RNA sequence: GGGAACGACUCGAGUAGAGUCGAAAAGAUAUGGACUUCGAUGAGUACCUGGAGAAACUCGGAAACGAGGUCCCUCCCUGUACGAGAAGUCCUAAGUCAAAGCUACGUAUCUUCGGAUACGUAGCAACUAUCCCCUGUAGUUCGCUACAGGGGAUAGAAAAGAAACAACAACAACAAC
Reactivity to 2A3 in 0.01 (KOAc 150mM, MgCl2 10mM, bicine 150mM(pH8.5), 24C), signal-to-noise 5, nucleotides 027 to 126: g040a020u090a050u160g000g010a000c000u010u020c040g300a300u250g020a040g080u020a020c020c040u040g030g000a020g000a040a110a030c010u000c020g010g030a070a060a040c020g020a000g000g040u170c030c020c000u010c000c000c010u020g010u000a010c020g010a030g000a130a000g000u000c000c000u010a100a010g010u010c060a140a050a040g000c010u000a010c000g000u010a000u020c010u040u160c300g050g000a000u000a000c000g000u000a000g000c000a000a000
Reactivity to DMS in 0.01 (KOAc 150mM, MgCl2 10mM, bicine 150mM(pH8.5), 24C), signal-to-noise 6, nucleotides 027 to 126: g000a040u010a300u000g000g010a010c000u000u000c000g010a190u020g010a200g000u000a010c010c090u010g000g000a040g000a070a060a180c000u000c000g010g010a070a110a160c010g010a010g000g000u010c290c120c010u010c000c000c050u000g000u000a000c010g000a100g000a000a010g010u000c000c000u000a020a050g010u000c030a090a090a130g010c000u000a010c000g000u000a010u000c000u000u020c210g010g000a000u000a010c000g020u000a000g000c000a020a020
The record gives the reactivity of an RNA of 177 nucleotides to 2A3 and DMS.
The 2A3 profile rests on 11,889 reads.
The RNA was probed in 150 mM KOAc, 10 mM MgCl2 and 150 mM bicine (pH 8.5) at 24 C.
For DMS, 7,519 sequencing reads were counted.
The data come from the RNA Mapping Database (RMDB), library TTRDEL.